[RMDB]
An RNA of 207 nucleotides, treated with 2A3 and DMS and read out base by base. Conditions: 150 mM KOAc, 10 mM MgCl2 and 150 mM bicine (pH 8.5), 24 C. For DMS, 12,489 sequencing reads were counted. The data come from the RNA Mapping Database (RMDB), library OK3TST. The 2A3 profile rests on 10,676 reads. DMS adducts were read by reverse transcription with MarathonRT.
RNA sequence: GGGAACGACUCGAGUAGAGUCGAAAAGACUUCGCAGAUCACAGCGCAGAAGCCGCCGACUACAUGCUGACCGUAGCGCUUCGCCAGCACGCCACACGCAAGGUUGAUACUGAGAUUCCCAUGUGCAGCCAUUGUGAAGAGUAUCCGGUCCAUGUGAAGACUAACUAUACUUCGGUAUAGUUAGUCUAAAAGAAACAACAACAACAAC
Reactivity to 2A3 in 0.01 (KOAc 150mM, MgCl2 10mM, bicine 150mM(pH8.5), 24C), signal-to-noise 9, nucleotides 027 to 156: g030a010c020u030u020c060g000c040a030g010a120u110c050a050c050a130g050c040g010c080a060g030a100a020g040c030c030g040c020c030g090a080c040u110a030c030a030u080g030c100u100g040a030c010c010g030u040a030g030c020g000c040u030u030c020g020c020c020a020g020c020a020c060g040c020c010a080c010a020c060g050c050a040a050g030g010u040u030g030a060u060a150c040u060g030a020g020a170u040u040c020c010c010a030u080g020u040g000c030a030g000c020c020a110u080u080g020u020g040a040a020g020a010g050u060a070u040c040c010g010g000u000c020c000a040u050g010u020g060a060
Reactivity to DMS in 0.01 (KOAc 150mM, MgCl2 10mM, bicine 150mM(pH8.5), 24C), signal-to-noise 5, nucleotides 027 to 156: g020a050c020u000u000c020g020c040a170g010a110u010c070a120c050a140g020c070g020c070a140g000a070a100g020c010c010g020c050c040g000a120c040u000a080c030a050u000g010c020u000g020a050c030c010g010u010a160g020c040g010c030u000u000c050g010c030c190a080g000c040a060c040g030c030c030a090c050a090c030g010c030a080a100g020g020u000u000g010a110u010a120c050u010g020a120g010a220u000u000c020c000c000a250u010g020u000g030c040a100g000c010c030a110u000u000g020u010g000a050a090g000a070g030u010a100u010c050c020g030g010u000c020c020a070u000g020u000g010a110